[RMDB]
RNA sequence: GGGAACGACUCGAGUAGAGUCGAAAAAGUGCUGCGGGGCACUGACGUUCGCGCCAUUUUGGCCGGGCACCUGCACUACUCGACGAAUGCCACCUUCGUCGGGAUCCCAGUGUCGGUUGCCUCGGCGCUUGUCGAUAUGAUUCGUCAUAUCGACAAGAAAAGAAACAACAACAACAAC
Reactivity to DMS in 0.01 (KOAc 150mM, MgCl2 10mM, bicine 150mM(pH8.5), 24C), signal-to-noise 5, nucleotides 027 to 126: a060g020u000g010c010u010g000c130g030g010g000g000c020a030c030u000g000a050c070g010u000u000c070g010c100g020c050c040a210u000u010u010u000g010g000c000c010g010g000g000c000a060c070c030u000g000c010a010c030u000a170c010u000c000g010a020c000g000a020a040u000g010c030c040a040c090c080u000u000c000g010u000c000g010g000g000a060u010c100c120c080a080g010u000g000u000c300g010g000u000u010g020c000c010u010c010g020g010c080g010
Reactivity to 2A3 in 0.01 (KOAc 150mM, MgCl2 10mM, bicine 150mM(pH8.5), 24C), signal-to-noise 3, nucleotides 027 to 126: a000g030u050g020c030u040g080c070g090g010g030g040c010a000c050u020g040a020c060g040u050u070c050g000c040g030c070c040a130u120u130u080u220g090g010c010c010g000g000g000c010a010c010c000u020g000c000a010c010u080a050c000u020c010g000a000c000g010a010a010u140g120c040c010a050c000c020u020u000c000g000u010c000g000g010g010a040u070c030c040c040a040g010u030g010u040c050g010g000u040u140g000c030c000u060c030g010g010c010g020